[RMDB]
RNA sequence: GGGAACGACUCGAGUAGAGUCGAAAACCGGAGGCUUCGGCCUCCGGAGAUGGCCGGUGACGGCCAUCAGCUUCUCUACGGAGAAGCAGCCACUUCUUCGGAAGUGGCAAGUCACUUCGUUCGCGAAGUGACAAGGACCUCGCUUCGGCGAGGUCCACCAGUGUUCUACGGAACACUGGAGUGUGUAACUACGGUUACACACACGACACUCUAAAGAGUUCCGUGAGGAACCACCUUGAGUGUCUAGUUAUAAAUAAACUAGGUCUACGAGAUGAUUCGUCAUCUCGAAAAGAAACAACAACAACAAC
Reactivity to 2A3 in 0.01 (KOAc 150mM, MgCl2 10mM, bicine 150mM(pH8.5), 24C), signal-to-noise 3, nucleotides 027 to 266: c000c000g010g010a000g010g000c030u080u110c300g090g010c010c000u000c010c000g000g000a010g000a000u000g010g000c020c010g040g050u100g060a060c010g000g010c000c010a000u000c000a000g000c000u000u000c000u020c000u010a080c280g110g000a000g000a010a000g010c000a010g010c000c000a000c000u000u000c020u020u040c190g100g000a010a000g000u010g000g000c000a000a020g000u000c000a000c000u000u000c000g030u010u020c130g020c000g120a000a000g010u000g000a000c000a000a100g010g000a010c000c000u000c000g000c020u050u100c230g100g010c000g000a000g000g000u000c000c000a000c000c000a000g010u000g000u000u000c010u030a060c270g180g000a000a000c000a000c000u000g000g000a130g010u000g000u000g000u000a000a000c000u010a020c220g100g000u000u000a000c000a000c000a000c010a010c040g000a000c000a000c000u000c010u010a020a000a000g090a030g020u000u000c030c030g100u100g150a140g020g000a000a000c000c000a000c000c000u010u000g000a010g010u000g010u000c000u000a010g000u010u110a260u150a220a250a100u200a080a110a070c100u080a030g000g000u000c000u040a020

The record gives the reactivity of an RNA of 307 nucleotides to 2A3. Conditions: 150 mM KOAc, 10 mM MgCl2 and 150 mM bicine (pH 8.5), 24 C. It was measured as part of the RMDB library POS240.